RNA sequence: GGGAACGACUCGAGUAGAGUCGAAAAUCGAGAUGGUGACGCUCGAGGAACUCGUGCCGAAGGACCACCUGCUGCGCCAGAUCGAUGCGGCGGUGGAUUUCGAGUUCAUCCGCGCGAAGGUGGCGCACCCUGAGGCGCUAUUCGUAGCGCCUCAGGGAAAAGAAACAACAACAACAAC
Reactivity to 2A3 in 0.01 (KOAc 150mM, MgCl2 10mM, bicine 150mM(pH8.5), 24C), signal-to-noise 1, nucleotides 027 to 126: u030c040g010a000g010a060u120g020g250u140g110a000c040g020c030u010c010g000a040g000g040a000a000c010u020c000g050u040g070c030c030g110a080a030g090g050a060c000c000a000c000c040u100g000c010u020g000c030g070c020c010a070g000a300u160c060g020a030u110g010c010g050g040c090g010g070u000g000g020a020u060u100u050c040g020a070g000u000u010c010a080u050c050c020g000c010g080c010g070a130a020g120g080u070g100g000c010g000c000a080
Reactivity to DMS in 0.01 (KOAc 150mM, MgCl2 10mM, bicine 150mM(pH8.5), 24C), signal-to-noise 1, nucleotides 027 to 126: u010c000g030a040g000a110u000g000g050u000g000a120c020g000c010u000c020g000a060g030g000a050a140c060u000c040g000u000g000c080c060g010a110a160g040g000a220c030c030a010c000c020u000g060c030u000g000c000g000c070c010a120g000a090u030c090g000a100u020g000c010g000g000c090g000g060u000g000g000a030u000u000u000c060g000a040g030u030u010c010a050u020c010c090g010c050g000c000g000a050a150g030g030u000g000g000c000g020c050a130
An RNA of 177 nucleotides, treated with 2A3 and DMS and read out base by base. For DMS the reverse transcriptase was MarathonRT. 2A3 adducts were read by reverse transcription with SuperScript II with manganese.